[RMDB]
RNA sequence: GGGAACGACUCGAGUAGAGUCGAAAACAUCUUAAUAGACCUGGUGUCUAUUGUGGCUCUGAUUUUAUUGACAUUGUCAGGCGGUUAGCAGUAUCACUGUUCCAGCCUAUUACUUAUUUCCAAUUGAACUACUUUAACUCUUCGGAGUUAAAGUAGUAAAAGAAACAACAACAACAAC
Reactivity to DMS in 0.01 (KOAc 150mM, MgCl2 10mM, bicine 150mM(pH8.5), 24C), signal-to-noise 4, nucleotides 027 to 126: c100a040u000c060u000u000a020a010u000a010g000a050c080c050u000g020g020u010g020u000c030u000a020u000u010g020u010g000g000c030u010c020u000g010a060u000u010u000u000a150u020u030g010a070c100a140u010u010g010u000c060a030g010g020c140g000g000u010u000a060g020c040a000g010u000a100u020c130a080c030u000g000u000u000c040c040a100g010c070c010u000a030u000u000a030c090u010u000a080u000u000u000c000c010a070a170u000u010g010a200
Reactivity to 2A3 in 0.01 (KOAc 150mM, MgCl2 10mM, bicine 150mM(pH8.5), 24C), signal-to-noise 4, nucleotides 027 to 126: c000a050u070c010u060u110a040a020u010a050g000a020c000c030u090g290g000u120g020u070c020u020a040u030u040g050u080g030g000c020u020c010u070g050a090u000u020u030u160a100u050u110g020a030c060a090u130u120g050u050c030a000g020g000c010g030g000u030u080a020g010c020a000g020u070a040u300c070a020c040u010g030u040u000c000c000a010g000c010c010u010a060u050u060a020c020u060u060a030u060u040u010c020c000a060a140u030u090g020a040
Overview
This 177-nucleotide RNA was probed chemically with DMS and 2A3. The data come from the RNA Mapping Database (RMDB), library 15KREP. For DMS the reverse transcriptase was MarathonRT.